[RMDB]
RNA sequence: GGGAACGACUCGAGUAGAGUCGAAAAGGAUACGCUUUUGUGGUGUCUUGACAUGAAAGAAGAGAUUAAGAGACUCGCCAGCUGACUUUGUUCGAGGAUUGUCUUGUCAGUUGGGUAAAUUUAGACAGUCCCUAUGAUUGUAGACGCUGAUAUAGCACAGCUACUAUACGUUCGCGUAUAGUAGCUGAAAAGAAACAACAACAACAAC
Reactivity to DMS in 0.01 (KOAc 150mM, MgCl2 10mM, bicine 150mM(pH8.5), 24C), signal-to-noise 1, nucleotides 027 to 156: g030g010a110u010a090c050g030c020u000u000u000u000g030u000g010g020u000g050u000c060u000u010g000a120c070a100u000g010a050a070a100g010a110a080g000a100g010a140u000u000a070a120g000a200g020a040c000u020c060g000c070c000a040g000c000u030g000a060c010u010u000u010g010u010u000c010g020a090g020g030a060u010u010g010u000c000u000u010g010u000c010a010g020u000u010g050g010g020u000a000a080a140u000u000u000a100g000a060c010a060g000u000c000c000c020u010a120u000g000a170u000u010g000u010a160g000a110c000g000c020u000g020a090u010a070u000a070g000c110a300
Reactivity to 2A3 in 0.01 (KOAc 150mM, MgCl2 10mM, bicine 150mM(pH8.5), 24C), signal-to-noise 5, nucleotides 027 to 156: g070g010a070u070a100c040g000c030u040u050u060u130g060u080g030g030u020g020u030c020u060u030g040a030c010a050u120g060a050a020a020g050a050a000g010a010g030a060u120u160a140a040g030a000g000a070c000u010c060g040c000c000a020g000c010u000g000a000c010u100u090u140g060u110u180c040g020a060g010g000a020u010u010g010u000c000u020u010g010u000c010a010g000u000u010g010g000g000u080a080a090a060u080u120u040a010g000a020c010a000g010u010c010c000c000u090a100u120g090a190u040u110g000u030a020g010a110c090g000c040u040g090a130u110a060u110a240g010c020a020